[RMDB]
RNA sequence: GGGAACGACUCGAGUAGAGUCGAAAAAUGCGGGUGACCACGAUGAAAUCGCGGGUGAUCGACAUCGUCGAAGAGAACGGGUUCUCAGUCGACGACCGCGACGACCUGUAUCCCGCGGCCGGCGUGCCGCACGGGCAAGGUUCGCCUUGCCCGUGCGAAAAGAAACAACAACAACAAC
Reactivity to 2A3 in 0.01 (KOAc 150mM, MgCl2 10mM, bicine 150mM(pH8.5), 24C), signal-to-noise 2, nucleotides 027 to 126: a010u080g000c010g030g030g000u050g050a080c070c020a030c100g060a080u130g090a120a010a050u010c010g010c020g030g030g070u220g070a300u130c050g050a060c020a100u090c090g060u040c030g010a080a040g010a030g010a090a070c120g200g210g020u080u000c030u000c010a010g100u010c000g000a000c000g020a040c040c000g000c010g000a020c010g000a010c020c010u040g000u060a090u040c010c000c010g000c020g000g000c020c000g070g090c020g110u150g040c040
Reactivity to DMS in 0.01 (KOAc 150mM, MgCl2 10mM, bicine 150mM(pH8.5), 24C), signal-to-noise 2, nucleotides 027 to 126: a140u010g000c030g020g020g030u000g000a120c200c000a030c150g000a070u010g000a090a110a270u000c000g020c020g000g000g020u000g000a130u000c020g010a100c090a140u010c050g010u000c030g010a080a070g000a070g000a020a050c130g050g020g000u000u000c020u000c000a170g010u000c000g020a020c010g000a040c070c040g030c040g000a030c010g000a080c040c030u000g000u000a150u000c000c010c000g010c030g010g000c010c010g010g000c230g040u000g010c050

Conditions: 150 mM KOAc, 10 mM MgCl2 and 150 mM bicine (pH 8.5), 24 C. An RNA of 177 nucleotides, treated with 2A3 and DMS and read out base by base. It was measured as part of the RMDB library OK2TRN. For DMS the reverse transcriptase was MarathonRT. The DMS profile rests on 2,115 reads. 2A3 adducts were read by reverse transcription with SuperScript II with manganese. High 2A3 reactivity points to a flexible backbone, as in loops and unpaired stretches.